[RMDB]
RNA sequence: GGGAACGACUCGAGUAGAGUCGAAAACUGACCAGGAUGCCGUCAACAGCAGAAACAAAACCAUAAAGUUCUGUAUCGUUUGCCUGUGACAGUUCAACGAUAGCGUAUCCUCCUGGCUCGAGCAGGGAGCCGUCACAAAAUUCGUUUUGUGACGGCUAAAAGAAACAACAACAACAAC
Reactivity to 2A3 in 0.01 (KOAc 150mM, MgCl2 10mM, bicine 150mM(pH8.5), 24C), signal-to-noise 1, nucleotides 027 to 126: c020u010g010a050c010c000a010g040g000a050u080g000c030c000g030u030c040a080a060c000a110g030c000a010g020a040a020a000c030a030a100a050a060c090c010a080u120a130a160a010g010u030u070c000u010g040u040a090u080c010g010u000u070u090g080c000c000u100g040u020g110a090c030a030g000u090u010c000a050a010c010g020a010u030a010g030c030g040u080a060u040c000c000u030c010c000u050g040g000c020u010c020g080a090g040c040a030g000g000g000
Reactivity to DMS in 0.01 (KOAc 150mM, MgCl2 10mM, bicine 150mM(pH8.5), 24C), signal-to-noise 2, nucleotides 027 to 126: c050u000g010a110c070c030a030g010g000a070u000g020c170c040g000u010c030a060a110c160a120g000c010a020g000a070a040a020c000a040a060a120a170c150c220a040u000a050a110a200g010u000u000c010u000g010u000a010u000c040g000u010u000u010g020c300c020u020g010u000g000a100c060a000g000u000u000c060a040a060c020g030a050u000a050g010c070g000u010a070u000c050c040u000c040c050u000g000g010c100u010c080g000a080g030c030a050g000g010g010